Description
The data come from the RNA Mapping Database (RMDB), library OK1LIB. Chemical mapping of a 177-nucleotide RNA with 2A3. Conditions: 150 mM KOAc, 10 mM MgCl2 and 150 mM bicine (pH 8.5), 24 C. 2A3 adducts were read by reverse transcription with SuperScript II with manganese.
[RMDB]
RNA sequence: GGGAACGACUCGAGUAGAGUCGAAAAACAUUUUUGGCCUCUCUAUUAAUAUAUCAUUUUAGCUAGAGCCAAAUGCAAUCACAGAGACACAAAUGUUCUUUGAUUCAUGAGUGCCCUCUGAAAAGUAAAUCCACUGCGUGUUCGCACGCAGUGGAUUAAAAGAAACAACAACAACAAC
Reactivity to 2A3 in 0.01 (KOAc 150mM, MgCl2 10mM, bicine 150mM(pH8.5), 24C), signal-to-noise 1, nucleotides 027 to 126: a000c000a050u000u010u000u000u090g000g000c000c000u030c000u000c000u000a000u140u160a140a060u140a020u070a090u300c000a060u000u020u030u000a000g000c000u030a000g030a000g000c030c000a000a000a000u120g050c140a020a040u060c030a000c010a060g020a000g000a030c000a000c010a000a150a000u020g000u030u060c070u070u200u180g130a180u060u000c020a000u000g050a000g000u000g070c000c030c120u020c000u010g080a160a000a000a000g180u100a010